[RMDB]
RNA sequence: GGGAACGACUCGAGUAGAGUCGAAAACAGUAUGCCUUCGGGCAUACUGAAACCAGAGGGUAUCUGGCCCACGCUCCCAUGCGUCCCGGGAAUCCCAUCCCAAAACGGAUGUCUUCGGACAUCCGAACUGUCACAGUAGGUUCGCCUACUGUGACAGAAAAGAAACAACAACAACAAC
Reactivity to DMS in 0.01 (KOAc 150mM, MgCl2 10mM, bicine 150mM(pH8.5), 24C), signal-to-noise 2, nucleotides 027 to 126: c010a000g010u000a010u000g000c020c000u000u060c210g040g000g020c000a000u000a000c010u010g010a000a060a160c030c050a040g010a030g000g000g020u010a070u010c020u000g010g000c050c050c050a250c060g000c020u000c000c060c050a080u000g030c070g020u020c000c020c040g010g000g030a070a100u000c010c020c020a160u010c020c000c010a030a050a140a160c000g010g000a000u000g010u010c000u010u010c170g010g020a010c000a000u000c020c000g000a020a030
Reactivity to 2A3 in 0.01 (KOAc 150mM, MgCl2 10mM, bicine 150mM(pH8.5), 24C), signal-to-noise 2, nucleotides 027 to 126: c000a010g020u010a020u010g000c010c010u030u080c300g080g000g000c000a000u000a000c000u010g000a060a000a000c000c000a010g050a030g080g110g070u190a100u100c020u050g000g000c010c000c000a010c010g020c010u110c020c050c020a040u120g030c000g050u020c020c000c010g020g000g000a030a050u010c000c020c000a030u030c050c010c000a030a060a000a000c020g000g000a000u000g000u000c000u010u050c170g100g000a000c010a000u000c000c010g000a030a020